This 177-nucleotide RNA was probed chemically with 2A3 and DMS. For 2A3, 7,229 sequencing reads were counted. Source: RMDB library TTRINS, as collected in RNAgym. Conditions: 150 mM KOAc, 10 mM MgCl2 and 150 mM bicine (pH 8.5), 24 C.

RNA sequence: GGGAACGACUCGAGUAGAGUCGAAAAGAUAUGGACGUGGACGGAGCGAAGAACUAUAAGAGUAAGGAGUACAUCGGAAACGAUGUACUCAGGAACUAUAGGGAGCUCCGGUACACGUCCUAAGUCAUCUAUCCUUUUACUUCGGUAAAAGGAUAGAAAAAGAAACAACAACAACAAC
Reactivity to 2A3 in 0.01 (KOAc 150mM, MgCl2 10mM, bicine 150mM(pH8.5), 24C), signal-to-noise 2, nucleotides 027 to 126: g000a000u000a010u050g000g000a000c000g010u000g030g010a020c000g010g000a010g000c010g240a300a030g020a050a010c010u010a010u080a230a190g180a060g300u150a140a080g160g000a000g010u000a000c000a010u000c000g010g000a020a000a000c000g010a000u010g000u000a000c000u000c000a000g000g040a060a000c010u000a000u010a010g000g000g010a000g000c010u000c020c000g000g000u030a010c010a000c010g010u010c000c000u000a000a000g000u000c000a010
Reactivity to DMS in 0.01 (KOAc 150mM, MgCl2 10mM, bicine 150mM(pH8.5), 24C), signal-to-noise 4, nucleotides 027 to 126: g010a030u000a030u010g000g010a000c000g050u000g000g010a110c160g010g000a030g030c000g000a110a180g000a120a250c000u000a010u000a040a110g000a220g000u030a210a210g010g000a030g000u000a000c000a000u000c000g000g000a010a010a050c000g010a000u000g010u010a010c000u000c000a010g010g010a140a250c080u000a010u000a000g000g000g000a020g000c000u000c000c000g030g010u010a020c000a010c000g000u000c000c000u000a000a060g000u000c010a230